[RMDB]
RNA sequence: GGGAACGACUCGAGUAGAGUCGAAAAGAUAUGGACCUGCGAACGGAUUUCUCCCGAAGAACUCGGAAACGAGGGAGGGAGAAUCCGGAGGUAUAGGUCCUAAGUCAAAGAAGGCUUCGGCCUUCAAGAACUUAUAAUAGUUCGCUAUUAUAAGUUCAAAAGAAACAACAACAACAAC
Reactivity to 2A3 in 0.01 (KOAc 150mM, MgCl2 10mM, bicine 150mM(pH8.5), 24C), signal-to-noise 4, nucleotides 027 to 126: g000a010u080a060u150g000g000a000c000c010u020g030c080g100a150a050c010g040g000a030u130u300u090c010u000c000c020c010g100a240a000g010a040a010c000u000c020g000g050a060a070a050c020g010a010g010g000g010a020g000g000g000a010g010a000a000u000c000c000g000g020a010g030g070u300a190u180a260g000g000u010c000c000u020a060a040g010u000c020a060a010a200g010a020a000g000g000c020u090u180c300g180g000c030c000u010u000c000a000a030
Reactivity to DMS in 0.01 (KOAc 150mM, MgCl2 10mM, bicine 150mM(pH8.5), 24C), signal-to-noise 4, nucleotides 027 to 126: g010a060u000a300u000g000g010a010c000c010u000g020c080g000a090a300c010g000g000a020u000u010u000c010u000c010c000c010g000a090a170g000a160a160c000u000c000g010g000a140a080a170c000g010a010g000g020g000a040g020g010g000a010g000a010a000u000c000c000g010g000a000g010g000u000a100u000a020g020g000u000c000c000u000a010a070g000u000c040a110a120a150g000a020a000g000g000c000u000u010c230g030g010c000c000u000u000c000a060a120
The record gives the reactivity of an RNA of 177 nucleotides to 2A3 and DMS.